[RMDB]
RNA sequence: GGGAACGACUCGAGUAGAGUCGAAAAUGGGAUUCGACAGGCGUAGAUUCGCGUUGACUGCGAUUCGUAGGUCACGUCUACGUUAAAAACGUCACAGUUAAAUUAUAACUGCAAAUAACGAAAAUUCUUACGCAGUAGCUGCUUAGUCAGCCUGCGUGUUAUUCGCUGUCUUCGGACAGCGAAUAACAAAAGAAACAACAACAACAAC
Reactivity to 2A3 in 0.01 (KOAc 150mM, MgCl2 10mM, bicine 150mM(pH8.5), 24C), signal-to-noise 2, nucleotides 027 to 156: u080g070g010g040a020u000u170c130g010a040c090a120g080g000c000g010u010a010g000a070u170u060c080g030c050g090u030u040g000a010c000u050g000c050g270a300u130u180c030g000u040a070g040g060u010c000a000c000g050u000c000u000a010c040g000u050u050a220a100a000a050a000c100g020u000c020a000c010a040g000u010u070a120a050a100u300u130a110u080a240a080c010u010g000c060a000a110a010u170a150a080c020g070a090a000a050a100u030u060c000u080u070a020c000g000c000a000g000u010a030g000c000u000g000c000u130u180a030g130u180c000a000g000c050c010u000g030c000g000u000